[RMDB]
RNA sequence: GGGAACGACUCGAGUAGAGUCGAAAAGUGCGGGCGGCGCGCUGGUGAUGGUGAUGGAAAAUCAACGGCGCGAUCCUCACGCAUGGUGUGAGCUGAUCCAGCGCCAUCAGGUCACGCUCUGGAACAGGACCCGAAAUACCUUCGGGUAUUUCGGGUCAAAAGAAACAACAACAACAAC
Reactivity to DMS in 0.01 (KOAc 150mM, MgCl2 10mM, bicine 150mM(pH8.5), 24C), signal-to-noise 1, nucleotides 027 to 126: g010u000g000c030g000g000g020c300g020g000c010g020c000g040c010u020g000g000u000g000a020u000g010g000u020g040a160u020g020g010a080a030a220a040u010c010a010a050c070g000g020c010g030c000g000a060u010c030c000u000c010a050c010g040c000a050u000g000g010u000g030u020g000a020g030c060u000g000a050u000c040c070a220g000c100g000c040c080a050u000c010a060g000g000u000c040a030c030g050c000u000c050u010g000g020a060a060c140a130g040
Reactivity to 2A3 in 0.01 (KOAc 150mM, MgCl2 10mM, bicine 150mM(pH8.5), 24C), signal-to-noise 1, nucleotides 027 to 126: g020u020g010c000g010g030g010c020g040g010c000g020c020g000c040u030g040g050u040g000a020u040g040g200u170g050a140u170g140g150a110a090a040a020u000c010a000a010c000g000g000c030g000c010g010a030u030c000c000u010c010a030c040g010c000a010u060g120g000u000g020u000g030a040g010c010u020g000a010u040c130c080a090g080c040g030c130c010a000u020c040a020g090g050u060c000a000c020g020c010u090c060u120g060g060a050a100c080a080g000

Chemical mapping of a 177-nucleotide RNA with DMS and 2A3. Values cover nucleotides 27 to 126. The reactions ran in a buffer of 150 mM KOAc, 10 mM MgCl2 and 150 mM bicine (pH 8.5), at 24 C.